[RMDB]
Structure probing data (DMS) for a 177-nucleotide construct. For DMS, 1,948 sequencing reads were counted.
RNA sequence: GGGAACGACUCGAGUAGAGUCGAAAAGAUAUGGAUCACGGUGGAAUUCCGCAGAUACUUUGAGGUAACUCAUCAUCGGAAACGAUGAUGAGUUACCUCAAAGUGUAGGAACCAUUGAUCCUAAGUCCACCUGUAUAUCCUUCGGGAUAUACAGGUGAAAAGAAACAACAACAACAAC
Reactivity to DMS in 0.01 (KOAc 150mM, MgCl2 10mM, bicine 150mM(pH8.5), 24C), signal-to-noise 3, nucleotides 027 to 126: g000a080u010a300u000g000g010a000u000c020a070c300g010g000u010g010g010a150a280u000u000c000c000g010c260a270g020a030u020a020c000u000u000u010g010a000g000g010u000a010a000c000u000c000a000u000c000a040u000c000g000g000a140a110a190c020g010a010u010g000a010u000g010a010g020u010u000a000c000c000u010c000a000a000a010g000u010g000u000a090g000g000a010a050c000c000a030u000u000g000a000u010c000c010u000a040a120g000u000c060
The RNA was probed in 150 mM KOAc, 10 mM MgCl2 and 150 mM bicine (pH 8.5) at 24 C.
DMS adducts were read by reverse transcription with MarathonRT.